[RMDB]
The record gives the reactivity of an RNA of 177 nucleotides to 2A3 and DMS.
For 2A3 the reverse transcriptase was SuperScript II with manganese.
Reactivities are given for positions 27 through 126.
The DMS profile rests on 4,822 reads.

RNA sequence: GGGAACGACUCGAGUAGAGUCGAAAAGAUAUUAACGCGCGUGCUGUGUCUAACGCGAAUUACCCAGUUAUUUUCGACAUUACUCGAGUCGUUAUAGCGUGAUAUGACACAGUUAUCCGCGAACGAAGUAAAUGGUUGAUUUCGAUCAACCAUUUACAAAAGAAACAACAACAACAAC
Reactivity to 2A3 in 0.01 (KOAc 150mM, MgCl2 10mM, bicine 150mM(pH8.5), 24C), signal-to-noise 3, nucleotides 027 to 126: g040a010u200a050u260u180a130a060c040g000c000g000c020g050u020g000c020u020g000u010g030u040c040u080a050a030c010g000c020g030a020a060u080u060a100c010c010c030a010g070u090u090a100u040u020u010u010c010g000a000c010a040u100u040a010c000u000c010g000a000g000u000c000g000u000u020a010u000a010g000c000g050u150g030a010u030a010u120g010a010c010a000c000a020g020u010u040a050u050c020c010g000c000g010a040a030c050g010a140a020
Reactivity to DMS in 0.01 (KOAc 150mM, MgCl2 10mM, bicine 150mM(pH8.5), 24C), signal-to-noise 4, nucleotides 027 to 126: g010a190u010a060u010u010a100a100c180g010c000g010c070g020u000g000c010u000g000u010g000u000c000u010a060a010c020g000c010g010a050a050u000u000a120c070c060c060a110g000u010u010a070u000u000u000u010c000g010a010c000a120u010u000a000c000u000c000g010a010g010u000c000g000u000u000a020u000a130g000c000g020u010g010a040u000a040u010g010a030c040a030c050a030g000u010u000a060u010c040c010g010c010g010a080a160c120g000a080a100